[RMDB]
RNA sequence: GGGAACGACUCGAGUAGAGUCGAAAAUGGUGGACUUGGACCUGGCACAGCAGUGGCGCAGGGAAAUGAAUGUCCGUUUGACGGCGGAGACUCGUGUCACUACCUUCGGAUGCAGAUCAGAUAUGCCCUCAGUCGACUUGUUCGCAAGUCGACUGAGAAAAGAAACAACAACAACAAC
Reactivity to 2A3 in 0.01 (KOAc 150mM, MgCl2 10mM, bicine 150mM(pH8.5), 24C), signal-to-noise 2, nucleotides 027 to 126: u090g000g060u100g030g000a030c020u030u080g060g020a040c010c000u000g010g030c030a060c100a160g220c040a080g030u030g150g000c160g040c090a020g180g030g100a000a040a100u160g080a120a140u130g010u000c000c000g000u000u000u120g140a040c020g030g000c030g040g010a060g030a090c030u000c020g040u090g000u000c030a000c030u080a090c000c000u050u100c040g090g000a040u060g010c060a050g020a070u020c000a060g010a060u090a000u220g000c030c000
Reactivity to DMS in 0.01 (KOAc 150mM, MgCl2 10mM, bicine 150mM(pH8.5), 24C), signal-to-noise 1, nucleotides 027 to 126: u050g020g080u010g000g000a050c150u000u030g050g000a300c000c100u000g010g000c010a100c080a220g060c120a050g000u040g000g000c040g000c070a070g010g000g000a080a130a020u020g000a150a010u060g000u000c000c020g000u050u000u020g010a180c150g080g000c000g000g000a050g000a070c040u020c000g000u030g000u000c000a110c080u000a150c000c050u010u000c020g000g000a030u050g000c170a000g000a080u050c130a020g000a110u020a020u050g070c030c000
Background: Structure probing data (2A3 and DMS) for a 177-nucleotide construct. Reactivities are rounded to 0.1 and cut off at 0 and 3. For 2A3, 975 sequencing reads were counted. For DMS the reverse transcriptase was MarathonRT. Conditions: 150 mM KOAc, 10 mM MgCl2 and 150 mM bicine (pH 8.5), 24 C. The DMS profile rests on 1,187 reads. It was measured as part of the RMDB library RFM100.